[RMDB]
RNA sequence: GGGAACGACUCGAGUAGAGUCGAAAAAUCCACAUCAUGCAUCACUUGAAUGUGGGGCUUGUGGUGGCGCAUCAAGCGGUUUUAAUGCUAAGUUAUUAGCGAUGAUAUGUAAUCGUCCAAAUGUCAGUAGCUAAAUCAGGUUCGCCUGAUUUAGCUAAAAAGAAACAACAACAACAAC
Reactivity to 2A3 in 0.01 (KOAc 150mM, MgCl2 10mM, bicine 150mM(pH8.5), 24C), signal-to-noise 5, nucleotides 027 to 126: a000u030c010c000a020c010a020u140c010a020u110g070c010a050u070c020a060c060u100u150g120a250a030u140g160u010g000g000g000g010c000u060u060g070u070g070g040u040g030g010c020g000c000a080u080c020a060a030g020c020g000g060u000u020u070u260a090a050u130g010c010u030a040a030g070u190u160a180u100u030a170g010c040g020a040u060g040a020u010a110u300g150u130a070a010u030c010g050u030c030c050a070a300a050u060g050u100c060a020g070
Reactivity to DMS in 0.01 (KOAc 150mM, MgCl2 10mM, bicine 150mM(pH8.5), 24C), signal-to-noise 3, nucleotides 027 to 126: a090u020c000c000a020c040a040u000c070a070u030g010c050a040u000c070a100c040u000u030g050a180a060u020g020u010g000g000g000g000c040u010u000g010u000g010g000u010g000g020c100g020c040a050u010c080a100a080g010c010g030g000u000u000u010u010a070a130u030g000c010u010a000a070g030u010u050a110u000u000a020g000c000g000a090u000g000a100u010a040u020g000u020a040a040u000c080g000u010c000c050a100a090a050u020g000u000c080a170g010